[RMDB]
The data come from the RNA Mapping Database (RMDB), library M2RFPK. This 207-nucleotide RNA was probed chemically with 2A3. Reactivities are given for positions 27 through 156. The 2A3 profile rests on 494 reads.
RNA sequence: GGGAACGACUCGAGUAGAGUCGAAAAUGCAAGUAGUGCUAUUGUUGGAAUCACGGUACCUAUUUAGGUUUACGCUCCAAGAUCGGUGGAUAGCAGCCCUAUCAAUAUCUAGGAGAACUGUGCUAUGAAAACGGUAUUGGCUUCGGCCAAUACCGAACGUCCUCGGAUGGUUCGCCAUCCGAGGACGAAAAGAAACAACAACAACAAC
Reactivity to 2A3 in 0.01 (KOAc 150mM, MgCl2 10mM, bicine 150mM(pH8.5), 24C), signal-to-noise 1, nucleotides 027 to 156: u120g020c040a100a050g140u040a020g030u060g020c020u050a080u260u040g060u010u000g010g070a020a040u080c080a020c030g000g020u020a050c020c010u060a180u140u140u300a050g000g040u030u070u060a050c080g010c000u000c000c000a000a020g020a050u110c050g030g160u060g080g040a030u020a000g000c000a020g000c020c010c000u050a080u070c080a020a050u030a010u110c050u040a050g000g020a000g070a050a000c050u060g000u000g020c110u160a120u210g100a020a000a040a000c000g000g000u000a000u000u000g000g000c000u000u030c200g090g000c010c000a000a000u000a000c000c000g000a000a000